[RMDB]
Conditions: 150 mM KOAc, 10 mM MgCl2 and 150 mM bicine (pH 8.5), 24 C. The record gives the reactivity of an RNA of 207 nucleotides to DMS and 2A3. Values cover nucleotides 27 to 156. Source: RMDB library RNAMAK, as collected in RNAgym. DMS adducts were read by reverse transcription with MarathonRT.
RNA sequence: GGGAACGACUCGAGUAGAGUCGAAAAUCUGGAAUUCGUUCCAGAGGAUAGCGUACUACAUGCAGAGGGUGUGGAGUUUAAAUCUCCCAAAUAGGAGAUGAACGAUGAAACACCUACCCACCUGCAUGUAUCGCAAAAGACUUAGUUCGCUAAGUAAAGUGUUCUUGUUUUUCGAAACAAGAACACUAAAAGAAACAACAACAACAAC
Reactivity to DMS in 0.01 (KOAc 150mM, MgCl2 10mM, bicine 150mM(pH8.5), 24C), signal-to-noise 2, nucleotides 027 to 156: u000c000u000g060g010a010a030u000u000c250g030u000u000c000c000a030g000a030g000g020a200u000a100g000c000g020u000a080c090u010a060c030a000u000g000c000a010g030a210g010g020g010u000g020u020g010g000a300g040u000u000u000a100a250a080u020c010u000c000c020c000a030a150a240u010a030g010g000a010g030a030u000g050a080a110c140g000a100u000g020a300a150a050c010a030c010c000u010a020c010c020c010a300c060c000u000g000c000a010u000g020u000a000u000c010g000c010a070a040a070a130g000a060c000u010u030a030g030u000u000c230g010c000u000a000a060g010u010a090a100
Reactivity to 2A3 in 0.01 (KOAc 150mM, MgCl2 10mM, bicine 150mM(pH8.5), 24C), signal-to-noise 4, nucleotides 027 to 156: u000c000u000g000g050a020a010u110u060c300g070u130u000c040c000a000g010a010g020g070a170u150a080g040c030g000u120a120c030u010a010c030a010u000g000c000a000g010a020g010g000g000u030g050u030g050g020a070g020u010u030u020a080a140a030u000c000u020c020c010c000a080a280a160u300a060g010g000a010g020a020u030g030a020a040c130g090a090u150g060a050a050a000c000a010c000c000u030a040c000c000c020a130c040c000u000g000c010a000u000g000u000a000u030c000g000c000a040a080a020a020g050a010c000u020u000a000g040u120u130c150g000c160u000a010a020g040u090a180a120